[RMDB]
Source: RMDB library OK1LIB, as collected in RNAgym.
Chemical mapping of a 177-nucleotide RNA with DMS and 2A3.
The RNA was probed in 150 mM KOAc, 10 mM MgCl2 and 150 mM bicine (pH 8.5) at 24 C.
2A3 adducts were read by reverse transcription with SuperScript II with manganese.
DMS adducts were read by reverse transcription with MarathonRT.
The DMS profile rests on 6,001 reads.

RNA sequence: GGGAACGACUCGAGUAGAGUCGAAAAAUUUUGGAACAUCUGGCUGACCCCAACAGCCCUCCUUAGUGGGAAGAAGUAGAGGAGAAUUUUCAAACGUGGAGACCUAUCCAUUGUUUCUACCUCUAGGACGUCAAAAUACGUUCGCGUAUUUUGACGUAAAAGAAACAACAACAACAAC
Reactivity to DMS in 0.01 (KOAc 150mM, MgCl2 10mM, bicine 150mM(pH8.5), 24C), signal-to-noise 4, nucleotides 027 to 126: a090u000u000u010u010g000g020a100a110c140a090u000c100u030g030g020c020u000g010a050c080c000c000c030a170a250c070a030g000c000c010c150u030c010c020u010u020a020g030u020g000g000g000a080a060g000a040a090g000u010a010g000a010g000g000a040g010a070a060u010u000u010u010c080a070a060a050c160g010u000g000g000a020g010a070c140c080u020a070u000c010c000a030u000u000g000u000u000u000c000u000a110c010c000u000c000u000a050g010g010
Reactivity to 2A3 in 0.01 (KOAc 150mM, MgCl2 10mM, bicine 150mM(pH8.5), 24C), signal-to-noise 5, nucleotides 027 to 126: a000u200u150u080u050g080g020a170a050c070a140u090c090u040g010g010c010u000g060a100c030c000c000c010a000a040c000a020g000c000c000c000u050c000c000u070u120a130g020u210g130g010g010a020a100g010a100a030g130u030a010g020a030g020g040a030g070a060a060u080u090u100u140c090a100a080a050c040g050u050g030g010a040g070a130c070c010u100a120u040c000c030a030u040u110g020u020u000u010c030u050a210c030c000u000c020u000a010g000g150